An RNA of 207 nucleotides, treated with 2A3 and DMS and read out base by base.
For 2A3, 904 sequencing reads were counted.
DMS adducts were read by reverse transcription with MarathonRT.
The reactions ran in a buffer of 150 mM KOAc, 10 mM MgCl2 and 150 mM bicine (pH 8.5), at 24 C.
It was measured as part of the RMDB library OK3TST.
RNA sequence: GGGAACGACUCGAGUAGAGUCGAAAAGAACAGGGGAAACAGCUGGAACAUGGAGUGAUGUUGGCAUCACUUAAUUAUCGCAGGAGACUCACUUUCUAGGGGUCAGAUUGAGACUGUAUUUUGCAACCUAAAGAAAAUAUAGGCAUUUUAUUACAUACAUUAUGGAGGCUUUCGAGCCUCCAUAAUGAAAAGAAACAACAACAACAAC
Reactivity to 2A3 in 0.01 (KOAc 150mM, MgCl2 10mM, bicine 150mM(pH8.5), 24C), signal-to-noise 2, nucleotides 027 to 156: g030a030a040c030a040g040g020g000g020a020a040a020c020a000g030c010u030g000g040a010a050c060a120u110g030g010a020g030u010g000a010u030g010u180u250g090g030c010a000u000c010a000c010u010u040a070a030u120u100a070u140c060g040c020a010g000g040a020g010a040c010u010c010a080c030u060u160u130c060u130a060g000g000g000g040u000c020a010g020a060u110u100g000a000g000a020c010u010g060u100a050u020u060u170u110g030c050a110a050c000c000u120a130a050a030g030a050a100a040a010u210a030u020a020g000g020c010a000u020u040u070u120a080u100u170a050c030a010u130a010
Reactivity to DMS in 0.01 (KOAc 150mM, MgCl2 10mM, bicine 150mM(pH8.5), 24C), signal-to-noise 2, nucleotides 027 to 156: g030a050a110c030a110g010g030g040g000a110a070a100c010a070g000c040u010g020g010a060a090c090a070u020g010g020a090g000u000g020a030u010g000u010u020g010g020c050a040u000c030a030c030u010u000a060a120u010u000a070u000c040g010c050a060g000g000a160g000a060c040u000c040a060c060u000u000u000c120u010a120g000g030g000g000u000c040a040g020a120u000u000g010a130g020a030c050u000g010u000a000u000u010u000u020g000c040a070a090c050c010u010a070a120a130g000a060a060a060a080u000a090u000a080g030g020c000a060u000u010u000u000a090u000u000a050c060a140u000a180